[RMDB]
RNA sequence: GGGAACGACUCGAGUAGAGUCGAAAAGAUUCGCCUGCCUCGGCUUCCAAAGUGCUGGGAUUACAGGUGUGAAUGACUGAAUAAUUGGAGAGUGUCUCUUUCUGACUCUCACCAUACUGACAACAGUGAAGUCCAGAGAGAAGCCCGGCACUGGAGAAUUCAAUAUCUUCUUCGGAAGAUAUUGAAUAAAAGAAACAACAACAACAAC
Reactivity to DMS in 0.01 (KOAc 150mM, MgCl2 10mM, bicine 150mM(pH8.5), 24C), signal-to-noise 1, nucleotides 027 to 156: g010a230u010u000c020g050c070c030u000g030c020c010u000c050g040g010c040u010u000c090c100a080a120a130g060u000g000c040u000g000g000g000a220u010u000a080c040a140g030g030u010g050u010g010a150a120u030g040a170c030u000g020a140a160u000a130a160u010u000g010g000a090g020a070g030u000g000u000c040u000c060u000u010u020c030u010g000a030c040u000c080u000c000a060c020c010a070u000a190c090u000g000a180c090a140a140c070a070g040u000g010a080a170g000u000c010c070a140g010a160g000a260g000a180a240g000c000c010c040g010g020c020a030c020u000g000g020a130g010a120
Reactivity to 2A3 in 0.01 (KOAc 150mM, MgCl2 10mM, bicine 150mM(pH8.5), 24C), signal-to-noise 2, nucleotides 027 to 156: g050a090u040u140c110g010c000c020u030g000c000c020u020c010g000g010c000u060u030c090c010a100a170a000g010u040g000c010u000g000g020g000a040u080u150a070c000a100g120g030u100g070u070g090a100a130u110g040a010c030u020g040a060a110u150a270a120u200u180g060g010a060g020a020g060u060g000u000c010u030c000u100u180u080c060u050g000a010c000u040c000u010c040a020c010c000a040u130a140c050u100g130a090c030a190a030c020a110g000u010g050a040a000g020u020c090c000a000g020a000g000a020g020a130a080g020c020c010c000g000g000c020a000c020u010g010g050a030g040a050